Structure probing data (2A3) for a 207-nucleotide construct. The 2A3 profile rests on 506 reads. Values cover nucleotides 27 to 156. It was measured as part of the RMDB library M2RFPK.

[RMDB]
RNA sequence: GGGAACGACUCGAGUAGAGUCGAAAAUAAGAAAAAUAAACAAGUGGUGGUAGUCCGCCGCUCUAAGGGGACGCCUUUAGAAGAAGAGGCUAGGUGGUAUUCCGGUGUGGGAUACUUGGUAAUAUGUAAGGGGAUGGUACGUUCGCGUACCAUCCAACAAGCUAAGGUUGUUCGCAACCUUAGCUUGAAAAGAAACAACAACAACAAC
Reactivity to 2A3 in 0.01 (KOAc 150mM, MgCl2 10mM, bicine 150mM(pH8.5), 24C), signal-to-noise 1, nucleotides 027 to 156: u060a000a010g100a010a130a000a000a030u230a050a130a010c050a220a110g050u000g110g000u010g040g100u020a060g010u030c000c000g010c010c000g000c020u000c000u020a070a050g060g000g000g000a010c120g090c000c000u180u050u050a170g030a110a000g000a030a000g070a080g010g000c010u020a070g090g080u070g070g000u020a020u000u040c020c020g140g000u160g110u150g150g000g010a010u000a000c000u050u050g040g010u040a070a070u090a070u170g190u080a040a040g130g000g000g050a000u000g000g020u000a020c030g000u060u060c130g010c010g020u000a000c000c000a000u000c000c000a000a000